RNA sequence: GGGAACGACUCGAGUAGAGUCGAAAAUGGGCGAGCACGUCCAGCGCGCGAUCAAUCGCCUCCGGUGCCGGCAGUAGUCGGGGAGCCGGGUCCACCGGCCGCCAAAUGGCGCCGGAAGCAGCCGAUGCCGUACAUGAGGAUUCGUCCUCAUGUACGGAAAAGAAACAACAACAACAAC
Reactivity to DMS in 0.01 (KOAc 150mM, MgCl2 10mM, bicine 150mM(pH8.5), 24C), signal-to-noise 2, nucleotides 027 to 126: u000g000g010g020c010g000a100g030c090a120c050g000u000c030c060a070g000c090g020c040g020c000g030a120u000c120a060a080u000c130g010c000c020u000c010c010g010g020u010g010c020c020g020g010c080a100g000u010a050g020u000c070g020g000g000g020a090g010c040c030g000g000g010u000c150c070a200c000c010g010g000c010c020g030c010c010a070a080a250u010g040g040c020g020c000c000g000g000a010a050g010c020a110g040c070c080g000a060u010g020
Reactivity to 2A3 in 0.01 (KOAc 150mM, MgCl2 10mM, bicine 150mM(pH8.5), 24C), signal-to-noise 2, nucleotides 027 to 126: u050g010g010g020c040g010a110g100c090a040c160g030u020c010c000a030g020c080g000c020g020c020g100a100u100c060a050a100u060c050g010c000c000u040c010c000g000g000u010g020c010c030g010g000c050a090g060u220a010g040u100c040g030g000g000g040a010g050c070c040g010g000g020u060c010c060a090c050c080g000g010c010c020g030c010c020a100a300a170u250g010g010c010g020c000c000g010g000a020a000g000c010a020g020c020c020g050a070u120g060
Conditions: 150 mM KOAc, 10 mM MgCl2 and 150 mM bicine (pH 8.5), 24 C. Structure probing data (DMS and 2A3) for a 177-nucleotide construct. The DMS profile rests on 1,278 reads. Reactivities are given for positions 27 through 126.